[RMDB]
An RNA of 170 nucleotides, treated with DMS and 2A3 and read out base by base.
For 2A3, 9,544 sequencing reads were counted.
The RNA was probed in 150 mM KOAc, 10 mM MgCl2 and 150 mM bicine (pH 8.5) at 24 C.
The data come from the RNA Mapping Database (RMDB), library 15KLIB.
RNA sequence: GGGAACGACUCGAGUAGAGUCGAAAAGUCUAUUAUGAGAGCAUGUCUUACCAGGAGCAAGAUGAACUUUUUGCCAUGACAAAGCGUAACGUCAUUCCUACCAUGACUCAAAUGAAUCUAAAAUAUGCAACUCACGGGUUCGCCCGUGAGAAAAGAAACAACAACAACAAC
Reactivity to DMS in 0.01 (KOAc 150mM, MgCl2 10mM, bicine 150mM(pH8.5), 24C), signal-to-noise 5, nucleotides 027 to 129: g000u010c040u040a000u060u040a060u040g010a120g000a080g080c020a070u050g040u020c030u040u080a050c130c080a070g010g020a100g030c030a050a000g050a020u020g000a120a000c090u010u050u010u000u030g030c060c120a080u000g010a050c010a040a080a010g040c090g030u020a100a030c150g020u010c000a060u000u000c030c040u030a080c200c040a060u060g000a080c000u020c050a090a090a130u080g030a090a000u030c110u060a030a000a070a070u040a090u030g050c110a040a070
Reactivity to 2A3 in 0.01 (KOAc 150mM, MgCl2 10mM, bicine 150mM(pH8.5), 24C), signal-to-noise 5, nucleotides 027 to 129: g000u000c060u030a090u130u050a120u180g030a010g000a030g060c020a010u010g020u010c030u050u090a080c060c050a060g000g030a050g000c000a010a050g020a000u020g000a050a120c060u020u040u030u020u060g020c010c060a060u140g020a050c000a020a050a020g040c060g010u030a040a040c040g000u000c010a020u010u060c000c000u030a020c020c010a030u100g060a100c000u080c050a040a040a050u100g050a010a050u040c030u210a040a030a050a050u270a100u240g060c010a020a010